The data come from the RNA Mapping Database (RMDB), library M2PK50. The record gives the reactivity of an RNA of 177 nucleotides to 2A3 and DMS. DMS adducts were read by reverse transcription with MarathonRT. The DMS profile rests on 2,490 reads.

RNA sequence: GGGAACGACUCGAGUAGAGUCGAAAAGAUCUCCGGUUCGCCGGAGAUCAAAGAAGUCACAACGGCUUCCUGACGUGGCAGAUUGAAUUAUUGGAGCAAAAAAAAUCGUUCCCUUCGGGGAACGAAAUCUAAGCAAAAAGUUCGCUUUUUGCUUAGAAAAAGAAACAACAACAACAAC
Reactivity to 2A3 in 0.01 (KOAc 150mM, MgCl2 10mM, bicine 150mM(pH8.5), 24C), signal-to-noise 3, nucleotides 027 to 126: g000a000u000c000u000c010c010g000g070u040u040c140g020c060c000g000g000a000g020a000u000c000a000a000a000g010a050a010g010u010c000a000c030a110a060c110g100g000c020u240u060c020c010u020g010a020c040g020u020g010g000c010a040g030a220u140u150g080a110a180u210u120a070u120u160g010g000a030g000c000a020a010a000a010a020a000a040a120u030c000g000u000u000c010c000c000u020u010c150g030g000g000g010a000a000c000g000a000a000a000
Reactivity to DMS in 0.01 (KOAc 150mM, MgCl2 10mM, bicine 150mM(pH8.5), 24C), signal-to-noise 3, nucleotides 027 to 126: g010a020u000c000u000c000c000g010g000u000u010c180g030c000c010g000g020a000g000a000u000c000a040a070a080g000a170a120g010u000c030a010c050a110a180c130g000g010c020u000u000c020c020u000g020a120c190g020u010g000g010c020a080g010a210u000u000g000a110a090u010u010a110u000u010g010g000a060g020c040a000a020a000a050a080a050a090a110u010c010g020u000u000c000c000c000u000u010c170g020g020g000g000a000a010c000g000a000a030a040